Structure probing data (DMS and 2A3) for a 177-nucleotide construct. For 2A3, 8,568 sequencing reads were counted. 2A3 is a SHAPE reagent: it acylates the 2'-hydroxyl of flexible nucleotides of all four kinds. Source: RMDB library RFMREP, as collected in RNAgym. For DMS the reverse transcriptase was MarathonRT.
RNA sequence: GGGAACGACUCGAGUAGAGUCGAAAACAUGGGUGAGGUACGAGGAAACAGUCUGAUAGUCACUGAAGACUGAUUAGAUCCAACUCUGAUCUCAGCAAAGCCGGGCCUCAGUUCUUCGGAACUGAGGGCGUUACUCUCUGUUCGCAGAGAGUAACGCAAAAGAAACAACAACAACAAC
Reactivity to DMS in 0.01 (KOAc 150mM, MgCl2 10mM, bicine 150mM(pH8.5), 24C), signal-to-noise 6, nucleotides 027 to 126: c100a110u010g010g000g020u000g010a110g010g010u000a030c100g000a250g010g000a090a080a140c270a100g010u000c000u000g010a090u000a040g020u000c050a120c240u010g000a170a090g000a020c010u000g010a070u000u000a040g000a070u000c030c080a080a240c080u000c010u000g000a050u000c000u000c010a040g000c090a070a070a140g000c050c040g000g000g010c000c000u000c000a010g000u000u000c000u000u000c230g030g000a000a000c000u010g000a010g010g010
Reactivity to 2A3 in 0.01 (KOAc 150mM, MgCl2 10mM, bicine 150mM(pH8.5), 24C), signal-to-noise 5, nucleotides 027 to 126: c040a080u130g090g000g050u030g040a010g020g020u060a020c020g010a020g000g050a080a090a010c010a020g010u000c000u000g010a050u040a030g070u090c040a040c230u190g140a150a030g000a040c000u010g030a020u020u030a020g020a050u010c020c010a010a030c000u000c000u030g020a010u020c000u000c010a020g080c050a090a070a020g060c020c030g040g060g010c010c000u000c000a000g010u010u000c010u030u060c190g090g000a000a000c000u000g000a000g000g010

The RNA was probed in 150 mM KOAc, 10 mM MgCl2 and 150 mM bicine (pH 8.5) at 24 C.